[RMDB]
This 207-nucleotide RNA was probed chemically with 2A3. 2A3 is a SHAPE reagent: it acylates the 2'-hydroxyl of flexible nucleotides of all four kinds. Reactivities are given for positions 27 through 156. The RNA was probed in 150 mM KOAc, 10 mM MgCl2 and 150 mM bicine (pH 8.5) at 24 C.
RNA sequence: GGGAACGACUCGAGUAGAGUCGAAAAGACAUUCAAUAAAUUAUUUGUUGACUGAUGAGGAAAGAAAAAGGAUGAUAUGAUGGAGGCUGGAGUGGGGUUUUAGGAAGCAUUCCAGUGUGGGACCUCAGCUUUAGUAUGAAGACAGGAGAACUGAGUACGAUUAAAUUAGCUUCGGCUAAUUUAAUCGAAAAGAAACAACAACAACAAC
Reactivity to 2A3 in 0.01 (KOAc 150mM, MgCl2 10mM, bicine 150mM(pH8.5), 24C), signal-to-noise 1, nucleotides 027 to 156: g010a010c040a030u100u050c100a140a070u230a130a070a190u190u200a200u170u150u060g000u010u010g010a030c060u050g000a010u060g000a090g030g010a020a080a150g020a070a110a010a000a000g030g000a000u010g080a000u030a040u300g050a000u040g000g020a010g010g050c010u020g010g100a010g000u080g000g030g000g010u080u030u000u000a010g000g000a050a010g100c000a020u110u070c050c000a010g010u000g030u060g050g060g000a020c000c010u040c000a010g000c000u000u190u000a040g030u000a060u160g000a040a000g000a000c050a020g060g020a080g020a020a020c010u000g080a000g000u080a000
Source information
Source: RMDB library OK3TST, as collected in RNAgym.